[RMDB]
RNA sequence: GGGAACGACUCGAGUAGAGUCGAAAAUUACACAUGACAGCGAGGAGAGCGCCGCUGCGUGUACGUUUGAUGAAGACGGCGUUGCGCCGAACUCCGUGGACGAAUCGUUACCAAUGUUAAACGAUGCGACACCUGAUCCUUUCGAGGAUCAGGUGUCAAAAGAAACAACAACAACAAC
Reactivity to 2A3 in 0.01 (KOAc 150mM, MgCl2 10mM, bicine 150mM(pH8.5), 24C), signal-to-noise 2, nucleotides 027 to 126: u100u070a020c030a010c030a050u120g150a050c030a030g060c030g080a070g040g020a060g020a010g020c030g020c000c010g000c000u000g030c000g030u030g070u050a070c000g020u020u070u060g180a200u170g050a030a010g040a000c010g000g000c020g000u050u060g000c010g000c000c020g010a020a020c000u020c000c010g000u080g040g020a040c020g020a050a030u010c010g010u030u070a090c040c010a110a080u150g040u060u130a100a040a020c020g020a040u070g040c020
Reactivity to DMS in 0.01 (KOAc 150mM, MgCl2 10mM, bicine 150mM(pH8.5), 24C), signal-to-noise 2, nucleotides 027 to 126: u010u020a090c170a030c100a040u020g060a080c080a040g000c050g010a150g010g010a120g010a010g010c010g020c180c030g000c010u000g010c010g040u020g010u010a030c110g010u010u000u000g020a180u010g000a160a070g000a060c010g030g020c020g040u000u000g000c020g060c240c010g010a040a050c010u010c000c020g000u010g030g000a160c040g000a080a050u000c020g030u000u060a110c050c040a120a120u010g020u010u000a100a070a080c100g000a060u000g010c260

Source information
Conditions: 150 mM KOAc, 10 mM MgCl2 and 150 mM bicine (pH 8.5), 24 C. Structure probing data (2A3 and DMS) for a 177-nucleotide construct. For DMS, 1,600 sequencing reads were counted. Reactivities are rounded to 0.1 and cut off at 0 and 3.